[RMDB]
RNA sequence: GGGAACGACUCGAGUAGAGUCGAAAACACCCACAAGGUGGACGGCAUCAAGAUGCUGUGGGACCAGGGUGUGCUCACCUCGGAGAUGGACCAGGACCUGCUGAGCGAGUACCUGUCCGGCCCAUGCAAGACUUAAUCUUUUCGAAGAUUAAGUCUUAAAAGAAACAACAACAACAAC
Reactivity to 2A3 in 0.01 (KOAc 150mM, MgCl2 10mM, bicine 150mM(pH8.5), 24C), signal-to-noise 7, nucleotides 027 to 126: c010a000c000c070c010a040c070a040a150g040g000u060g040g060a010c010g010g000c000a020u010c110a150a090g100a190u040g000c020u030g010u060g050g180g040a020c010c020a050g010g010g000u030g010u030g000c010u020c020a110c000c020u030c040g080g010a140g040a140u140g030g000a030c060c090a060g020g030a030c010c010u030g010c070u160g070a040g100c040g010a020g030u070a230c000c010u020g000u000c000c000g030g000c010c010c000a030u120g020c020
Reactivity to DMS in 0.01 (KOAc 150mM, MgCl2 10mM, bicine 150mM(pH8.5), 24C), signal-to-noise 9, nucleotides 027 to 126: c060a050c000c000c010a130c210a130a130g010g020u000g010g010a070c030g000g010c010a030u000c150a130a160g020a090u000g010c010u000g020u000g020g020g000a080c020c030a100g000g010g010u010g010u000g000c060u000c050a090c150c040u000c070g010g010a080g010a080u000g000g000a050c090c080a100g010g000a090c020c070u000g010c040u000g000a120g020c090g010a060g010u000a070c050c030u000g000u000c010c000g020g000c020c010c010a060u010g010c190

About this RNA: The record gives the reactivity of an RNA of 177 nucleotides to 2A3 and DMS. For 2A3, 13,661 sequencing reads were counted. The reactions ran in a buffer of 150 mM KOAc, 10 mM MgCl2 and 150 mM bicine (pH 8.5), at 24 C.